[RMDB]
Chemical mapping of a 177-nucleotide RNA with 2A3 and DMS. Values cover nucleotides 27 to 126.
RNA sequence: GGGAACGACUCGAGUAGAGUCGAAAAAGCUCUUACAUGGUGGGAUCAACUCUUGCCAAUGAUAAGACCAUACUUGUGGAGAAACAACGGGCCAGUGAUCAUGGUUCAGGUGGUGAUCGCUUAAGGGACGAUGGAGGAUCUUCGGAUCCUCCAUCGUAAAAGAAACAACAACAACAAC
Reactivity to 2A3 in 0.01 (KOAc 150mM, MgCl2 10mM, bicine 150mM(pH8.5), 24C), signal-to-noise 2, nucleotides 027 to 126: a000g120c000u000c000u000u030a000c000a050u030g010g010u010g000g020g000a020u200c180a130a100c100u000c020u080u050g050c000c070a110a210u090g020a160u000a010a010g070a070c000c100a100u130a300c060u080u070g000u060g080g140a060g000a000a120a040c030a080a080c080g020g010g000c080c000a010g010u030g060a000u030c070a120u090g060g050u140u240c080a160g000g050u100g000g000u020g100a080u000c000g000c100u050u170a110a110g050g070g000
Reactivity to DMS in 0.01 (KOAc 150mM, MgCl2 10mM, bicine 150mM(pH8.5), 24C), signal-to-noise 1, nucleotides 027 to 126: a230g020c270u000c000u000u040a000c020a010u000g000g140u000g000g090g000a050u060c160a100a140c300u000c000u000u000g000c000c000a020a150u000g000a080u000a000a010g000a010c000c100a030u210a160c050u000u000g030u000g000g000a070g000a070a060a030c170a080a090c120g000g000g040c000c040a060g000u020g000a020u030c100a020u000g000g030u020u000c050a000g020g040u020g060g070u000g000a020u050c000g000c000u000u070a000a180g040g000g000

For DMS, 1,169 sequencing reads were counted.
For 2A3, 524 sequencing reads were counted.